[RMDB]
RNA sequence: GGGAACGACUCGAGUAGAGUCGAAAACUUGGGCGAAACCCAAUACUGUGCUGGCUUCAGGUGUGUCCCAGCAGUCUCAGUGGGUUUAUCCAAAGGAGCAUUGCGUGACUCCAUCCCCAACUCCGGGCAGCUCAGCAUGAAGAAAGAGACUCCAUUAAUUUACCUCCUAGUUCGCUAGGAGGUAAAUAAAAGAAACAACAACAACAAC
Reactivity to 2A3 in 0.01 (KOAc 150mM, MgCl2 10mM, bicine 150mM(pH8.5), 24C), signal-to-noise 2, nucleotides 027 to 156: c040u060u020g000g000g020c200g110a100a080a050c010c000c010a030a060u190a060c000u040g030u050g060c000u020g010g090c010u100u140c120a130g050g020u050g030u020g040u120c010c010c000a010g000c000a000g040u050c070u020c070a030g040u070g000g030g020u000u090u030a040u070c020c030a040a100a030g000g000a020g020c070a050u110u240g040c050g080u100g060a070c010u030c040c020a090u090c000c000c000c010a060a130c050u030c050c050g010g040g000c020a030g020c020u020c040a040g030c030a030u090g050a040a140g040a030a170a000g040a010g030a040c010u040c050c000a120u120u180a060
Reactivity to DMS in 0.01 (KOAc 150mM, MgCl2 10mM, bicine 150mM(pH8.5), 24C), signal-to-noise 1, nucleotides 027 to 156: c050u000u000g040g020g050c090g020a090a030a300c000c010c010a050a080u000a080c030u010g020u000g030c000u010g030g000c080u000u000c050a090g020g030u000g030u000g050u000c300c030c000a160g010c020a020g010u010c000u000c030a080g070u010g010g000g010u000u010u000a100u000c030c030a060a100a160g010g000a090g010c050a090u000u030g020c090g060u010g000a110c010u010c010c040a130u020c010c040c000c010a090a060c050u010c030c070g020g030g020c070a090g000c000u000c040a110g000c060a100u010g010a090a080g000a000a020a090g020a210g000a050c010u010c000c010a120u000u010a100